[RMDB]
RNA sequence: GGGAACGACUCGAGUAGAGUCGAAAACGCUGGGCGUCGUGGGACAUGAAACGGUCUGAAGCGCGCACGGACCUAUUUCAACAGCCGUAACAUCGACGCCUGUGCUGAAGCGCGCACGGCAACCGAAAGGUGCGACAAGCCCUUUUCGAAGGGCUAAAUUACAUGCAAAAUUCGUUUUGCAUGUAAUAAAAGAAACAACAACAACAAC
Reactivity to DMS in 0.01 (KOAc 150mM, MgCl2 10mM, bicine 150mM(pH8.5), 24C), signal-to-noise 3, nucleotides 027 to 156: c060g050c020u000g030g020g040c030g000u000c020g030u000g060g020g010a080c040a270u010g010a070a080a080c210g020g030u000c020u000g000a030a040g020c010g070c010g020c010a300c020g000g010a010c020c010u000a130u010u000u000c030a080a130c110a190g010c040c040g000u010a090a120c100a080u000c000g030a030c010g040c020c000u000g000u000g040c020u000g000a040a110g010c040g040c000g010c020a150c050g000g000c050a080a090c020c020g010a080a120a150g020g000u000g010c020g010a140c040a110a060g000c010c000c000u000u000u000u010c190g010a030a020g030g030g010c000u000a000a020
Reactivity to 2A3 in 0.01 (KOAc 150mM, MgCl2 10mM, bicine 150mM(pH8.5), 24C), signal-to-noise 7, nucleotides 027 to 156: c030g000c010u030g000g010g000c000g010u000c000g000u040g000g060g040a070c050a230u160g040a140a110a040c120g010g000u000c000u020g050a240a100g000c000g000c000g000c010a020c000g000g000a000c000c010u110a250u100u180u120c130a160a130c040a100g070c030c030g070u120a050a030c040a190u160c030g000a000c000g000c000c000u010g010u010g000c010u060g010a100a040g000c000g000c000g000c000a000c010g030g000c000a040a070c000c000g040a090a020a010g000g000u020g020c000g020a020c000a020a040g000c000c000c020u010u030u040u080c200g090a000a000g000g000g010c000u010a030a030
Record summary: Conditions: 150 mM KOAc, 10 mM MgCl2 and 150 mM bicine (pH 8.5), 24 C. Structure probing data (DMS and 2A3) for a 207-nucleotide construct. Values are in units of 0.01, from 0 to 300, in steps of 10. Values cover nucleotides 27 to 156. The DMS profile rests on 7,807 reads. It was measured as part of the RMDB library RNAMAK. In probing experiments dimethyl sulfate is read out at A N1 and C N3, which are open when not base-paired. For 2A3 the reverse transcriptase was SuperScript II with manganese.